[RMDB]
RNA sequence: GGGAACGACUCGAGUAGAGUCGAAAAUAACAGUGUCCUGGCGUGAAAACGUCAGGCAACUAGCAAUCACUGUAUGCUAGUUGCAUUGUGUGAAAACACAAUGAUGCUGUUUAACAGUGAUUGAUACGAACUAGAGGUAUUUCGAUAUCUCUAGUUCAAAAGAAACAACAACAACAAC
Reactivity to DMS in 0.01 (KOAc 150mM, MgCl2 10mM, bicine 150mM(pH8.5), 24C), signal-to-noise 8, nucleotides 027 to 126: u020a010a010c000a000g010u000g010u010c000c000u000g010g000c000g000u000g000a110a040a130a010c000g010u000c010a000g000g000c000a000a000c000u000a000g000c000a060a140u000c000a000c000u000g010u000a190u000g000c000u000a010g000u000u000g010c000a040u000u000g010u000g010u000g010a160a080a150a020c000a000c000a010a000u010g000a010u000g000c000u000g010u000u000u000a050a030c000a000g000u000g000a260u040u020g010a120u030a100c220
Reactivity to 2A3 in 0.01 (KOAc 150mM, MgCl2 10mM, bicine 150mM(pH8.5), 24C), signal-to-noise 9, nucleotides 027 to 126: u060a000a000c000a000g000u000g010u010c000c000u000g000g000c000g000u010g050a050a020a010a010c000g010u000c000a000g000g000c000a000a000c000u000a000g000c000a000a020u050c000a000c000u000g000u010a040u030g000c000u000a000g000u000u000g000c000a000u000u000g000u000g000u000g070a040a000a020a000c000a000c000a000a000u000g000a000u000g000c000u000g000u000u000u020a020a000c000a000g010u000g020a040u040u160g050a030u050a080c100
Chemical mapping of a 177-nucleotide RNA with DMS and 2A3. The 2A3 profile rests on 75,386 reads. For 2A3 the reverse transcriptase was SuperScript II with manganese. The RNA was probed in 150 mM KOAc, 10 mM MgCl2 and 150 mM bicine (pH 8.5) at 24 C. For DMS, 53,379 sequencing reads were counted. DMS adducts were read by reverse transcription with MarathonRT. Reactivities are rounded to 0.1 and cut off at 0 and 3. Reactivities are given for positions 27 through 126. It was measured as part of the RMDB library OK1LIB.